[RMDB]
RNA sequence: GGGAACGACUCGAGUAGAGUCGAAAAGCUUUGUUAUUGCUGAUAUUAUUAUUACAGUUAUUACGCGUGUCAACCGAAAGGGGAGUAGGAGCGAGCUCCAGGCAUGUGGAAUGCAAGCUCUAGGGAGUAAGAUGAUCGUAUUCGUACGAUCAUCUUAAAAAGAAACAACAACAACAAC
Reactivity to DMS in 0.01 (KOAc 150mM, MgCl2 10mM, bicine 150mM(pH8.5), 24C), signal-to-noise 5, nucleotides 027 to 126: g000c030u000u010u000g020u000u000a090u010u000g010c020u010g000a130u000a060u000u010a120u020u010a090u010u000a140c030a040g010u000u000a050u000u000a070c050g000c050g020u000g000u000c060a110a300c030c020g020a050a090a120g010g000g000g010a080g020u000a080g010g010a050g010c040g010a180g010c020u000c020c020a110g010g010c060a020u000g020u010g000g010a060a040u010g010c020a040a130g000c020u000c040u010a090g010g010g010a120g010
Reactivity to 2A3 in 0.01 (KOAc 150mM, MgCl2 10mM, bicine 150mM(pH8.5), 24C), signal-to-noise 3, nucleotides 027 to 126: g010c030u180u180u120g040u060u070a110u060u100g010c010u020g070a100u030a060u150u170a100u160u030a060u060u090a140c010a030g020u040u060a070u110u050a050c020g000c010g000u020g020u000c060a100a040c030c000g030a070a030a000g020g020g020g000a000g030u100a080g010g040a030g020c050g020a020g010c000u000c000c000a030g030g040c020a020u110g020u030g090g080a050a020u110g000c060a050a010g000c010u010c010u030a070g060g050g040a070g070
Source: RMDB library OK2TRN, as collected in RNAgym. This 177-nucleotide RNA was probed chemically with DMS and 2A3. For DMS, 6,022 sequencing reads were counted. For DMS the reverse transcriptase was MarathonRT.